[RMDB]
RNA sequence: GGGAACGACUCGAGUAGAGUCGAAAAAUGCUUUGAUAUUCCGGAUGUGAUUGAUCCUUCACUAUUGUAUUCUGACAAAAGUCACUCUAUGGAUUUAGAUGAAAUUAAAGAACAUCUACAGACCAAGUCCGUACCCUUUAUUCGUAAAGGGUACGGAAAAAGAAACAACAACAACAAC
Reactivity to DMS in 0.01 (KOAc 150mM, MgCl2 10mM, bicine 150mM(pH8.5), 24C), signal-to-noise 2, nucleotides 027 to 126: a000u020g000c070u010u020u010g020a110u100a080u020u000c020c000g030g040a080u010g000u010g000a000u000u000g010a080u000c040c000u000u020c000a040c090u030a070u000u020g000u010a040u000u000c010u000g000a070c130a030a190a140a070g020u020c030a090c150u000c020u000a040u000g000g000a090u010u030u010a020g010a050u000g000a040a050a180u050u050a020a130a180g000a140a070c010a030u000c030u000a000c170a020g000a060c030c020a060a070g000
Reactivity to 2A3 in 0.01 (KOAc 150mM, MgCl2 10mM, bicine 150mM(pH8.5), 24C), signal-to-noise 2, nucleotides 027 to 126: a000u040g020c000u060u070u160g060a080u070a100u210u000c020c000g060g000a030u050g000u000g030a080u040u070g070a070u080c000c000u040u090c020a010c070u090a110u000u180g050u080a070u050u160c040u090g060a060c110a120a260a030a010g010u050c000a030c050u040c010u000a210u230g060g010a070u100u080u010a010g000a000u030g020a080a120a160u130u150a150a010a060g040a040a000c000a030u020c000u010a020c020a020g040a080c000c000a030a000g080